[RMDB]
RNA sequence: GGGAACGACUCGAGUAGAGUCGAAAAGAAAAUGACUGAAACAUCAACAGUAGAUGUACCUAAAAUUGUAAAAUACUUUGGUAAUUGGAAACUCAUCACAUUCGCCAUAAACUAUUCAUCAUCUGAAACUUUUCUUUGGUGUAGUGGUUACACAGCAGUACUAUCUGGGAUUCGUCCCAGAUAGUACAAAAGAAACAACAACAACAAC
Reactivity to 2A3 in 0.01 (KOAc 150mM, MgCl2 10mM, bicine 150mM(pH8.5), 24C), signal-to-noise 5, nucleotides 027 to 156: g070a000a090a000a020u110g030a030c050u050g030a080a080a060c030a040u050c030a010a110c030a070g060u110a040g050a020u040g030u050a040c020c010u070a110a130a110a110u120u110g030u100a070a110a010a050u140a060c040u070u040u060g030g020u070a050a090u070u080g070g020a030a050a020c040u060c050a080u080c030a060c010a130u100u080c060g010c030c000a040u080a060a110a060c020u040a120u100u070c010a050u010c010a040u010c050u040g060a080a110a120c030u110u120u120u020c030u030u070u100g020g000u000g010u010a050g010u020g080g050u020u030a020c070a000c010a050g220c050a000
Reactivity to DMS in 0.01 (KOAc 150mM, MgCl2 10mM, bicine 150mM(pH8.5), 24C), signal-to-noise 2, nucleotides 027 to 156: g000a050a060a080a070u000g020a150c020u000g010a180a160a120c060a080u000c030a080a150c040a130g000u000a160g010a090u000g020u000a140c020c010u010a040a040a050a050u010u000g020u000a070a100a100a120u000a060c020u000u000u000g010g010u000a020a120u000u000g010g010a150a060a100c110u000c040a090u000c090a070c040a100u010u000c020g000c090c050a080u000a070a070a080c050u000a070u010u010c020a010u000c030a050u010c050u020g010a060a060a160c100u000u000u000u000c000u000u020u000g010g050u010g000u000a040g020u010g010g010u000u000a090c120a150c090a100g010c050a150